[RMDB]
RNA sequence: GGGAACGACUCGAGUAGAGUCGAAAAGAGGGAAGGCAACAUGUUGAUGUUGAAGAUUUGAUAGACAUUGUACUAACAGAUUUAAAGAGCAAUAACUUCAAUGAAAUAGUAAAGUCUCUAGAAAAUGCAAAGAAUAAUCGUUCGCGAUUAUUCUUUGAAAAGAAACAACAACAACAAC
Reactivity to DMS in 0.01 (KOAc 150mM, MgCl2 10mM, bicine 150mM(pH8.5), 24C), signal-to-noise 3, nucleotides 027 to 126: g010a080g020g010g010a100a050g000g000c040a040a030c090a050u010g020u000u010g010a060u000g020u000u000g010a120a100g010a070u000u000u000g000a200u000a040g000a020c030a100u010u010g020u000a040c040u010a030a060c130a080g010a080u000u000u000a030a040a070g020a110g020c050a060a110u020a120a110c030u000u000c030a010a030u010g000a120a060a050u000a020g010u000a030a060a080g000u000c080u010c030u020a050g010a100a030a050a030u000g010
Reactivity to 2A3 in 0.01 (KOAc 150mM, MgCl2 10mM, bicine 150mM(pH8.5), 24C), signal-to-noise 3, nucleotides 027 to 126: g090a000g010g010g020a010a000g000g020c010a020a000c010a050u050g010u030u030g020a040u010g010u010u020g020a100a060g010a100u040u040u110g060a040u030a020g010a010c040a080u070u160g060u050a030c010u000a030a060c010a110g050a040u020u090u110a060a070a000g020a010g020c020a060a050u180a100a070c000u030u040c020a030a080u090g030a090a080a010u030a000g000u010a000a010a070g010u020c010u040c000u040a030g150a040a080a040a000u120g000
Structure probing data (DMS and 2A3) for a 177-nucleotide construct. For DMS, 2,764 sequencing reads were counted. The RNA was probed in 150 mM KOAc, 10 mM MgCl2 and 150 mM bicine (pH 8.5) at 24 C. It was measured as part of the RMDB library OK2TST.